Annotation
Chemical mapping of a 207-nucleotide RNA with 2A3 and DMS. Values cover nucleotides 27 to 156. For 2A3, 4,925 sequencing reads were counted. For DMS, 4,200 sequencing reads were counted. It was measured as part of the RMDB library OK3TST.

RNA sequence: GGGAACGACUCGAGUAGAGUCGAAAAGUGUAGGGUGAUCUAAGGGGAAAUACAAGACACUGGGAUCAUAUAAAGAGGUCACAUCAUCCUCUUGGAUGAGCUAAGAAUAAAUCUCCUAGAAUAAGUCAUGCUUAGGUUUACACUAAAAGGUUGACUAGCUGUUGGUAUUAUUCGUAAUACCAACAGCAAAAGAAACAACAACAACAAC
Reactivity to 2A3 in 0.01 (KOAc 150mM, MgCl2 10mM, bicine 150mM(pH8.5), 24C), signal-to-noise 6, nucleotides 027 to 156: g060u060g020u060a040g010g000g060u040g030a050u050c040u110a030a050g030g010g020g030a020a050a020u180a060c040a050a070g070a030c020a010c100u030g020g050g020a040u060c050a020u080a020u060a130a060a030g060a010g010g020u050c050a030c020a160u090c010a030u020c010c030u070c020u110u120g020g010a030u010g010a010g010c030u080a090a030g040a100a090u130a060a080a030u050c060u020c010c010u020a030g050a080a100u150a140a010g030u020c030a030u100g040c010u020u030a020g020g010u040u090u060a030c070a020c010u080a150a100a000a000g060g020u030u030g030a060c010u030a020
Reactivity to DMS in 0.01 (KOAc 150mM, MgCl2 10mM, bicine 150mM(pH8.5), 24C), signal-to-noise 3, nucleotides 027 to 156: g020u000g030u000a070g020g010g040u000g020a100u010c070u000a100a080g030g020g010g010a040a150a150u000a090c080a070a120g000a150c060a060c070u000g010g010g010a060u000c040a070u000a110u000a050a090a110g010a110g040g030u000c070a060c100a170u000c050a130u000c010c030u010c120u010u000g030g030a020u000g000a070g000c080u010a060a110g000a100a180u000a030a060a110u010c040u010c020c020u000a120g020a120a100u010a060a100g000u000c020a090u000g000c020u000u000a050g020g010u000u010u000a080c070a070c030u000a020a090a070a100g030g020u010u010g000a030c040u010a190